[RMDB]
RNA sequence: GGGAACGACUCGAGUAGAGUCGAAAAAAGAUAUGGACCUCGCUCCCCACCAUUACUUGUCAGGCACGCGAUUCGGAAACGAAUCGGGUGCCUUGGAUUUAGUAAUGAGGCGAGGUCCUAAGUCAAACCAUGUAAAAAUCUUCGGAUUUUUACAUGGAAAAGAAACAACAACAACAAC
Reactivity to DMS in 0.01 (KOAc 150mM, MgCl2 10mM, bicine 150mM(pH8.5), 24C), signal-to-noise 2, nucleotides 027 to 126: a120a070g020a100u020a210u010g010g010a020c000c000u000c000g010c000u000c200c020c020c030a300c090c000a000u000u000a000c010u020u010g000u010c040a040g010g020c000a010c000g000c000g000a020u000u000c000g010g000a080a090a170c000g000a000a010u000c000g000g000g040u000g000c000c000u000u010g010g000a020u000u010u000a000g020u000a000a000u010g000a120g030g010c000g000a010g000g010u000c000c000u000a010a090g010u010c070a100a140a200
Record summary
The record gives the reactivity of an RNA of 177 nucleotides to DMS. Values are in units of 0.01, from 0 to 300, in steps of 10. Reactivities are given for positions 27 through 126. The RNA was probed in 150 mM KOAc, 10 mM MgCl2 and 150 mM bicine (pH 8.5) at 24 C.